Overview:
The data come from the RNA Mapping Database (RMDB), library 15KLIB. Structure probing data (2A3 and DMS) for a 170-nucleotide construct. The reactions ran in a buffer of 150 mM KOAc, 10 mM MgCl2 and 150 mM bicine (pH 8.5), at 24 C. The 2A3 profile rests on 32,736 reads. For DMS, 55,079 sequencing reads were counted.

RNA sequence: GGGAACGACUCGAGUAGAGUCGAAAAGACUCUGGUGACACCUCACCACAAGUUCUUAAGGCUUUGCAGAAGGCUGUUAAUAUAGCUAAAAACGCCUAUGAGAAGGAUAAGGCAGUGGCCCGUAAGUUAACUAACCAGUUCGCUGGUUAGAAAAGAAACAACAACAACAAC
Reactivity to 2A3 in 0.01 (KOAc 150mM, MgCl2 10mM, bicine 150mM(pH8.5), 24C), signal-to-noise 9, nucleotides 027 to 129: g010a010c000u000c020u020g010g010u000g040a040c040a070c080c050u030c000a010c000c010a030c040a060a040g060u090u040c000u030u080a050a020g020g000c010u040u080u090g020c030a020g030a190a030g070g010c020u010g010u020u020a130a030u170a040u070a100g020c040u090a060a010a070a110a070c060g010c000c000u080a120u180g050a070g020a080a030g060g010a030u050a100a040g020g000c020a020g010u030g050g020c000c000c010g010u020a060a050g060u040u080a060a030
Reactivity to DMS in 0.01 (KOAc 150mM, MgCl2 10mM, bicine 150mM(pH8.5), 24C), signal-to-noise 9, nucleotides 027 to 129: g020a090c040u020c270u030g000g020u020g000a040c220a130c150c170u000c030a050c000c010a010c200a080a090g000u000u020c000u030u010a050a100g000g040c030u030u000u030g040c100a090g020a120a080g020g030c040u040g000u030u040a080a080u020a090u030a050g010c030u020a030a070a050a080a060c130g000c000c000u020a030u020g010a090g000a080a060g040g020a040u030a050a080g030g040c050a050g020u000g040g010c000c070c050g050u060a050a060g010u000u000a060a120